[RMDB]
RNA sequence: GGGAACGACUCGAGUAGAGUCGAAAAACGCGGAGUACGCUCCGCGACAACACUUCUUUCGACCCGCUAACCGAGAACUAUGGGUCGUUAAAUUACGUCUCUAUCUUACUCACAUAACAUCGCACAAAAAACGUGGUUCGGUUCGCCGAACCACGAACCUUCAAAUAAAGUUCGCUUUAUUUGAAGGAAAAGAAACAACAACAACAAC
Reactivity to 2A3 in 0.01 (KOAc 150mM, MgCl2 10mM, bicine 150mM(pH8.5), 24C), signal-to-noise 7, nucleotides 027 to 156: a000c010g000c000g000g010a010g000u040a030c150g030c060u010c000c000g040c010g030a000c000a070a020c020a020c050u110u140c030u060u170u080c010g000a000c010c010c020g030c120u070a050a030c090c060g050a020g030a120a020c040u070a100u230g000g000g000u010c000g020u020u030a020a050a040u150u070a020c020g010u000c010u000c020u050a090u090c040u070u100a090c020u090c100a070c020a160u170a180a040c030a120u160c080g030c120a040c090a060a040a030a060a090a040c040g000u000g000g000u000u000c000g010g010u020u030c050g060c060c000g010a000a000c000c000a000c000g000a000a000
Reactivity to DMS in 0.01 (KOAc 150mM, MgCl2 10mM, bicine 150mM(pH8.5), 24C), signal-to-noise 2, nucleotides 027 to 156: a110c010g050c010g000g010a050g070u010a110c250g020c040u010c000c000g050c000g020a080c090a050a120c130a160c110u000u000c000u000u010u000c020g010a050c000c000c000g000c120u000a190a230c070c020g030a150g060a130a070c110u000a120u010g000g000g000u020c020g000u000u000a010a080a120u020u000a060c040g000u000c020u000c030u010a080u000c040u010u000a100c000u000c030a090c050a050u010a070a090c070a050u000c060g000c090a080c070a000a030a000a020a110a150c000g070u000g000g040u020u000c000g020g020u000u010c280g030c030c000g010a000a020c000c000a000c000g060a030a060